[RMDB]
RNA sequence: GGGAACGACUCGAGUAGAGUCGAAAAAGUGCCACCUGAAGGUAGAAAAGCCUUAUCUACACGCACAAUAAGGCUUUUCUCUAUACAGACAUUGAUAGACAUACAGUCACACAGAGUUUAUAACUUCAGUUCUAAACUUUCAGCCAUGAAUUAAUAAGCCAUAAUAACGCUUCGGCGUUAUUAUGGCAAAAGAAACAACAACAACAAC
Reactivity to 2A3 in 0.01 (KOAc 150mM, MgCl2 10mM, bicine 150mM(pH8.5), 24C), signal-to-noise 1, nucleotides 027 to 156: a020g050u050g060c000c020a060c040c040u000g040a070a000g050g050u180a030g060a000a000a000a000g000c010c000u010u010a020u020c070u040a100c100a090c280g080c100a120c020a020a000u010a000a000g020g010c000u000u000u000u000c000u000c000u000a040u000a050c010a000g080a030c040a050u100u130g090a130u160a170g070a010c020a020u300a030c100a060g010u020c020a050c000a000c020a050g020a010g090u040u110u000a050u060a070a060c050u060u180c040a060g030u000u000c020u090a060a110a060c020u000u090u050c070a040g060c040c000a050u210g020a020a000u270u220a120a080u250a230a030
Record summary:
This 207-nucleotide RNA was probed chemically with 2A3. The 2A3 profile rests on 483 reads. 2A3 adducts were read by reverse transcription with SuperScript II with manganese. It was measured as part of the RMDB library OK3TST. Reactivities are given for positions 27 through 156. Conditions: 150 mM KOAc, 10 mM MgCl2 and 150 mM bicine (pH 8.5), 24 C.